[RMDB]
RNA sequence: GGGAACGACUCGAGUAGAGUCGAAAAACCUAAUCGCACUAGUGUUGUUUCUUUUAAUGAAUGGGCUCUUGCCAACCAAUUCACUGAAUUUGUUGGCACUCAAUCCGUUGACAUGUUAGCUGUCAAAAUAGGGUCUAGUUCGCUAGACCCAAAAGAAACAACAACAACAAC
Reactivity to 2A3 in 0.01 (KOAc 150mM, MgCl2 10mM, bicine 150mM(pH8.5), 24C), signal-to-noise 3, nucleotides 027 to 129: a000c130c040u180a160a080u080c010g040c110a090c100u110a010g040u020g020u090u000g000u010u010u000c000u000u000u120u020a160a120u140g120a010a110u040g000g000g000c040u000c000u090u170g000c000c010a000a000c020c010a010a010u000u000c110a130c300u300g000a000a000u010u000u000g010u000u000g000g000c070a000c000u100c000a050a190u040c010c030g080u030u030g000a000c000a000u060g060u110u130a130g030c100u000g000u000c000a000a000a010a080u150a040
Reactivity to DMS in 0.01 (KOAc 150mM, MgCl2 10mM, bicine 150mM(pH8.5), 24C), signal-to-noise 3, nucleotides 027 to 129: a000c080c000u090a300a060u070c070g010c280a030c110u040a000g000u040g060u260u000g000u030u040u040c070u000u090u000u090a200a130u030g050a080a130u160g000g000g000c160u070c300u020u020g050c220c000a020a020c030c030a000a000u000u000c080a200c210u280g050a000a000u000u000u000g000u110u000g000g000c000a000c090u010c220a180a050u000c110c200g000u000u000g000a000c240a100u150g190u000u000a150g060c220u000g050u050c080a010a000a220a000u090a220
Conditions: 150 mM KOAc, 10 mM MgCl2 and 150 mM bicine (pH 8.5), 24 C. This 170-nucleotide RNA was probed chemically with 2A3 and DMS. For 2A3, 2,855 sequencing reads were counted. It was measured as part of the RMDB library 15KLIB.